[RMDB]
The record gives the reactivity of an RNA of 207 nucleotides to 2A3.
RNA sequence: GGGAACGACUCGAGUAGAGUCGAAAAACCUUUAAGCAGAUGGCAGGUUCACCCCGUACGGUGCGGAAGUUCGCGCUUCCGUGAAACGCGAAAAUCGGACGGUGGCUGCAAGUCGCAUCGCAAAACCUAUAGCUUGUUAGGUUCGCCUAACAAGCAAGACGUAGCAACGAUUCGUCGUUGCUACGUCAAAAGAAACAACAACAACAAC
Reactivity to 2A3 in 0.01 (KOAc 150mM, MgCl2 10mM, bicine 150mM(pH8.5), 24C), signal-to-noise 2, nucleotides 027 to 156: a000c000c000u040u070u030a100a030g030c040a050g020a050u000g040g020c010a020g000g060u090u070c040a040c000c000c000c000g000u030a010c000g010g040u070g000c020g010g010a070a000g010u090u260c080g000c040g000c190u000u000c010c010g070u030g000a140a160a010c080g020c000g140a060a000a000a170u100c000g010g000a040c110g040g010u040g110g000c000u040g040c020a000a030g050u010c070g000c080a000u070c040g000c060a050a070a170a110c130c040u170a170u070a220g000c000u000u000g000u000u030a040g010g000u010u030c130g080c000c000u020a020a020c020a000a000g010c000a010a010
For 2A3 the reverse transcriptase was SuperScript II with manganese. The reactions ran in a buffer of 150 mM KOAc, 10 mM MgCl2 and 150 mM bicine (pH 8.5), at 24 C. It was measured as part of the RMDB library M2RFPK.